RNA sequence: GGGAACGACUCGAGUAGAGUCGAAAAGUCCGUUCCUUCGGGAACGGACAAAGGGAAACCAAGCAGAAGGUUCGUGUACCUACAGCAAAAAUAAACACGAAAAAAGCCCUCUGUUCGCAGAGGGCAACAGUUCAUUUACGUUCGCGUAAAUGAACUGAAAAGAAACAACAACAACAAC
Reactivity to 2A3 in 0.01 (KOAc 150mM, MgCl2 10mM, bicine 150mM(pH8.5), 24C), signal-to-noise 2, nucleotides 027 to 126: g000u020c000c000g000u000u000c000c000u010u040c180g120g000g000a000a000c000g020g000a010c000a010a010a000g030g000g010a000a070a000c020c010a010a050g070c020a050g030a300a000g020g010u020u030c020g010u010g010u050a050c000c000u010a030c030a050g130c030a020a100a080a000a020u110a050a070a000c000a010c030g000a090a050a000a000a000a000g000c000c000c000u000c000u000g040u020u040c140g010c050a000g000a000g000g010g000c010a000a000
Reactivity to DMS in 0.01 (KOAc 150mM, MgCl2 10mM, bicine 150mM(pH8.5), 24C), signal-to-noise 2, nucleotides 027 to 126: g020u000c000c000g010u000u010c010c000u010u020c270g000g010g040a040a020c000g000g000a000c000a000a020a080g000g020g010a150a120a270c020c030a050a070g050c200a140g000a090a030g010g020u000u000c020g050u000g010u000a080c000c010u010a050c090a150g000c140a000a060a040a020a010u050a000a040a050c010a000c020g020a020a040a070a060a070a120g000c000c000c000u010c000u020g030u000u020c130g000c000a010g000a000g000g000g020c010a000a020
Chemical mapping of a 177-nucleotide RNA with 2A3 and DMS. 2A3 adducts were read by reverse transcription with SuperScript II with manganese. High 2A3 reactivity points to a flexible backbone, as in loops and unpaired stretches. The RNA was probed in 150 mM KOAc, 10 mM MgCl2 and 150 mM bicine (pH 8.5) at 24 C. High DMS reactivity at an A or C suggests that its Watson-Crick edge is free. Source: RMDB library M2PK50, as collected in RNAgym. Values cover nucleotides 27 to 126. For DMS the reverse transcriptase was MarathonRT.